[RMDB]
RNA sequence: GGGAACGACUCGAGUAGAGUCGAAAAAGCGAGUACACGCAGUAUAGUGCCACUUGUGUGAGAAUACUUUUAGUACAAGCGAGUACACGCAGUAUACUGCCACUUGUGUGAGAAUACUUUUAGUACACGCGAUGUAAUAAUUCGUUAUUACAUCGCGAAAAGAAACAACAACAACAAC
Reactivity to DMS in 0.01 (KOAc 150mM, MgCl2 10mM, bicine 150mM(pH8.5), 24C), signal-to-noise 4, nucleotides 027 to 126: a100g020c020g010a070g020u000a030c080a220c300g020c010a010g030u000a000u020a040g000u000g020c010c140a050c030u000u000g010u000g000u020g000a070g000a120a140u010a000c020u000u040u000u040a070g000u000a020c020a120a190g020c020g000a030g000u030a070c090a120c300g010c010a030g010u000a010u000a010c030u000g000c020c080a000c020u010u000g000u010g010u000g000a090g000a100a060u010a040c030u010u000u000u020a090g010u000a060c190a300
Reactivity to 2A3 in 0.01 (KOAc 150mM, MgCl2 10mM, bicine 150mM(pH8.5), 24C), signal-to-noise 7, nucleotides 027 to 126: a010g050c040g010a010g030u150a030c070a010c080g000c000a000g000u010a010u010a020g270u020g010c010c020a020c000u020u020g020u000g020u070g070a110g100a110a040u080a100c020u070u170u160u260a090g010u020a040c030a090a000g020c020g030a000g030u060a030c080a000c050g000c000a010g020u000a000u000a010c000u000g020c010c000a020c010u030u000g010u010g020u110g080a040g070a090a040u100a130c000u030u060u090u130a090g050u110a060c060a020